RNA sequence: GGGAACGACUCGAGUAGAGUCGAAAACUAGAUGCAGCCCAUCAAAAACCCAGGAAUCCUCCAUGCUGCGUUAAAGAUUAAGUGGUCUUAACGCAAAAGAACACCACUUGCCGAACAAGAACAAGAACUAAAUAUCAUAGUUCGCUAUGAUAUUUAGAAAAGAAACAACAACAACAAC
Reactivity to 2A3 in 0.01 (KOAc 150mM, MgCl2 10mM, bicine 150mM(pH8.5), 24C), signal-to-noise 3, nucleotides 027 to 126: c000u010a030g010a100u050g010c020a010g030c010c040c020a020u040c030a000a120a050a040a050c010c020c020a020g080g110a070a120u060c020c020u000c010c020a040u060g030c000u010g000c020g000u010u020a050a150a010g040a030u070u080a140a090g080u090g130g010u010c000u000u010a010a000c000g000c010a000a010a020a060g040a050a000c030a020c040c000a010c020u010u040g020c020c020g050a060a040c030a080a020g070a040a030c030a070a010g080a030a010
Reactivity to DMS in 0.01 (KOAc 150mM, MgCl2 10mM, bicine 150mM(pH8.5), 24C), signal-to-noise 6, nucleotides 027 to 126: c090u000a080g000a120u000g010c070a090g020c070c050c030a070u010c060a070a090a090a100a090c050c020c010a080g000g010a110a090u010c030c010u000c020c030a070u000g010c100u000g000c000g010u000u000a020a040a080g000a010u000u010a070a060g050u000g010g000u000c010u000u000a020a020c030g000c010a020a030a100a150g000a050a070c120a050c080c020a030c020u000u000g000c070c050g000a080a080c160a080a060g000a050a050c110a050a110g010a080a140

Source: RMDB library OK2TST, as collected in RNAgym.
Structure probing data (2A3 and DMS) for a 177-nucleotide construct.
The 2A3 profile rests on 4,820 reads.
The DMS profile rests on 5,744 reads.
The reactions ran in a buffer of 150 mM KOAc, 10 mM MgCl2 and 150 mM bicine (pH 8.5), at 24 C.